[RMDB]
RNA sequence: GGGAACGACUCGAGUAGAGUCGAAAAUCUUUGAUGAUCUUUCUGAGAAAGAUCCUCAAGAGUUAUUUGCUUUCGUCAAGGAUUGUGCCCAUACCUUCCUUCCUGCCUAUGUCCCUAUUAUGGAAAAGAGAAAGAACAUGGAAUUCACUGAAGAUGACAUAGUCGUAUCGUUCGCGAUACGACUAUGAAAAGAAACAACAACAACAAC
Reactivity to 2A3 in 0.01 (KOAc 150mM, MgCl2 10mM, bicine 150mM(pH8.5), 24C), signal-to-noise 2, nucleotides 027 to 156: u040c010u050u040u050g010a010u010g010a010u000c000u020u060u000c130u250g060a080g050a200a060a010g020a010u010c000c020u020c000a040a030g020a020g080u130u130a170u100u150u120g060c070u060u060u060c040g060u030c040a040a020g030g020a020u010u060g010u070g030c000c000c010a000u060a050c020c000u040u000c000c000u020u020c000c010u040g020c020c010u070a070u100g040u020c000c010c000u030a070u250u040a080u170g040g020a000a000a100a030g080a000g040a000a130a020g040a040a020c020a070u090g000g060a030a030u110u040c030a030c050u060g050a060a030g080a140u080g010a030
Reactivity to DMS in 0.01 (KOAc 150mM, MgCl2 10mM, bicine 150mM(pH8.5), 24C), signal-to-noise 2, nucleotides 027 to 156: u010c000u010u000u000g010a020u000g020a020u000c000u010u010u000c010u000g000a300g010a090a040a040g000a020u000c020c110u000c050a030a070g000a100g000u010u010a070u000u010u010g020c000u010u000u000c040g030u000c050a110a070g030g000a060u000u010g000u010g000c050c000c030a130u000a050c050c040u000u000c000c020u000u000c020c000u000g000c080c020u010a110u020g020u000c010c020c020u030a180u000u010a130u000g000g010a050a050a040a130g000a090g000a060a080a060g000a030a060c050a080u000g010g000a080a080u010u000c000a090c080u010g020a110a070g010a100u000g000a190
Conditions: 150 mM KOAc, 10 mM MgCl2 and 150 mM bicine (pH 8.5), 24 C.
The record gives the reactivity of an RNA of 207 nucleotides to 2A3 and DMS.
For 2A3, 2,006 sequencing reads were counted.
Reactivities are given for positions 27 through 156.
2A3 adducts were read by reverse transcription with SuperScript II with manganese.